[RMDB]
RNA sequence: GGGAACGACUCGAGUAGAGUCGAAAAGCACCUGGGUUCGCCCAGGUGCAAAGAUCAGUAGCAUGCAAGAUGAAAUCCGAUAGGAUGCUACAGGGAAACCAAAAAGCCAGUGCUUCGGCACUGGCAACAUGCACUAAAGGUUCGCCUUUAGUGCAUGAAAAGAAACAACAACAACAAC
Reactivity to 2A3 in 0.01 (KOAc 150mM, MgCl2 10mM, bicine 150mM(pH8.5), 24C), signal-to-noise 2, nucleotides 027 to 126: g010c000a000c000c000u010g010g020g020u040u050c170g090c000c000c000a000g040g020u000g000c000a000a000a000g010a030u060c030a010g000u010a000g010c010a010u140g060c040a090a050g030a120u160g170a130a170a120u060c030c030g040a050u130a150g100g020a010u010g000c000u010a000c000a000g070g040g010a030a030a050c020c020a040a150a030a000a000g010c000c010a010g000u000g010c000u050u100c140g070g000c000a000c010u010g000g000c000a000a000
Reactivity to DMS in 0.01 (KOAc 150mM, MgCl2 10mM, bicine 150mM(pH8.5), 24C), signal-to-noise 3, nucleotides 027 to 126: g000c000a000c010c000u010g020g020g020u000u000c230g030c020c000c000a000g020g030u020g000c000a000a020a060g000a150u010c060a080g020u000a020g010c000a010u020g000c020a100a070g010a070u000g000a090a070a300u000c020c040g010a110u000a120g010g010a000u000g000c010u000a030c030a100g010g000g010a070a070a150c040c030a060a120a050a150a100g000c010c000a000g010u000g000c020u000u010c160g010g000c000a010c000u000g000g010c020a000a000